RNA sequence: GGGAACGACUCGAGUAGAGUCGAAAAUCAUGAAGUCACAAUCUCACUAUUCGCUGCGCUGCAGCUAAGUCAUCUAAGUUGACGAUGUACCUAGACUCAAUCUCAUGACGAGGUGUGAAUUCGUUUUUGAGGAAGCUUGGUACAUUUGCUGAAGUAACCCUAUAGCUUAAUUCGUUAAGCUAUAGGGAAAAGAAACAACAACAACAAC
Reactivity to DMS in 0.01 (KOAc 150mM, MgCl2 10mM, bicine 150mM(pH8.5), 24C), signal-to-noise 3, nucleotides 027 to 156: u010c060a130u010g020a120a090g010u010c080a090c080a080a150u000c030u030c050a140c100u000a140u000u000c100g030c040u000g010c020g000c030u000g030c010a030g010c020u000a020a090g020u000c020a010u000c080u010a120a170g000u020u000g010a050c030g000a040u000g020u000a030c010c010u010a080g000a100c020u000c040a090a130u010c020u000c000a040u000g000a020c020g010a030g030g010u000g040u000g020a100a110u010u000c020g010u020u010u000u000u000g040a060g070g000a080a040g020c020u010u000g000g040u000a010c020a040u000u000u000g020c020u010g000a030a060g000u010a110a250
Reactivity to 2A3 in 0.01 (KOAc 150mM, MgCl2 10mM, bicine 150mM(pH8.5), 24C), signal-to-noise 9, nucleotides 027 to 156: u160c070a080u120g100a090a020g110u070c050a040c040a120a110u050c050u030c040a060c050u120a130u160u140c070g010c040u040g000c300g100c210u290g000c010a010g000c000u030a040a000g040u000c010a050u020c100u140a060a120g070u040u030g050a030c020g020a010u000g000u000a010c000c000u010a080g160a300c000u010c020a030a070u030c000u000c000a010u020g010a000c010g010a010g020g060u150g070u110g200a120a160u050u000c000g010u010u020u030u050u030g020a010g030g070a030a000g000c010u010u010g020g000u010a000c010a010u040u040u120g010c020u060g050a060a020g000u020a040a040